[RMDB]
RNA sequence: GGGAACGACUCGAGUAGAGUCGAAAAGAUAUGGAUCCACACAAGCUUUGAUCUAUGGGUCGGAAACGACCCUGUAGGGAGCUUGAGUGGAUCCUAAGUCAAAGUUGAAGCGUUCGCGCUUCAACAACCAAUUGGAUGGGUUCGCCCAUCCAAUUGGAAAAGAAACAACAACAACAAC
Reactivity to DMS in 0.01 (KOAc 150mM, MgCl2 10mM, bicine 150mM(pH8.5), 24C), signal-to-noise 1, nucleotides 027 to 126: g010a020u000a100u020g000g000a020u020c000c010a000c000a070c010a010a000g010c010u020u010u040g010a040u020c020u000a030u000g020g030g000u020c000g010g000a010a020a080c010g010a000c000c000c000u000g030u000a000g010g000g000a010g020c000u000u000g010a040g050u000g020g000a000u000c000c010u000a000a100g010u000c020a140a110a170g010u000u010g010a020a000g010c010g040u010u020c300g020c020g000c010u000u010c000a000a010c010a140a200
Reactivity to 2A3 in 0.01 (KOAc 150mM, MgCl2 10mM, bicine 150mM(pH8.5), 24C), signal-to-noise 1, nucleotides 027 to 126: g030a000u020a020u060g010g000a000u060c000c000a000c010a010c000a010a000g020c030u300u300u060g000a000u040c000u010a060u090g000g000g010u000c010g010g000a040a010a010c040g000a000c000c000c000u010g010u020a010g010g000g010a020g000c000u030u010g010a010g030u010g000g000a000u000c000c000u000a010a000g010u000c050a170a070a100g010u000u010g000a000a000g000c010g060u090u300c300g030c030g050c160u020u000c000a000a010c010a000a040